[RMDB]
RNA sequence: GGGAACGACUCGAGUAGAGUCGAAAACGUGGAUCUGAAGAGCGGAGCCGGCGCAUAACACAAAGGUUUCCGCGGUCUGCGCCUUCGCCAGCGGCGCGACCGUCUGGAGUUCGUCACCGUUGGCCGCGUGCGUGCAGCUAUUCGUAGCUGCACGCACAAAAGAAACAACAACAACAAC
Reactivity to 2A3 in 0.01 (KOAc 150mM, MgCl2 10mM, bicine 150mM(pH8.5), 24C), signal-to-noise 1, nucleotides 027 to 126: c010g020u040g000g010a000u010c040u160g120a260a040g100a210g140c000g010g010a040g000c010c020g090g000c060g010c070a140u050a300a040c060a010c030a090a080a030g030g050u030u300u010c030c000g020c030g000g000u020c010u010g000c010g100c030c000u060u100c000g000c020c010a010g000c010g000g000c040g030c040g030a020c000c000g040u060c150u200g210g040a110g000u140u060c040g160u170c000a000c110c000g000u000u000g000g000c090c050g150c040
The record gives the reactivity of an RNA of 177 nucleotides to 2A3. As a SHAPE reagent, 2A3 marks flexible, mostly unpaired nucleotides at the ribose 2'-OH. 2A3 adducts were read by reverse transcription with SuperScript II with manganese.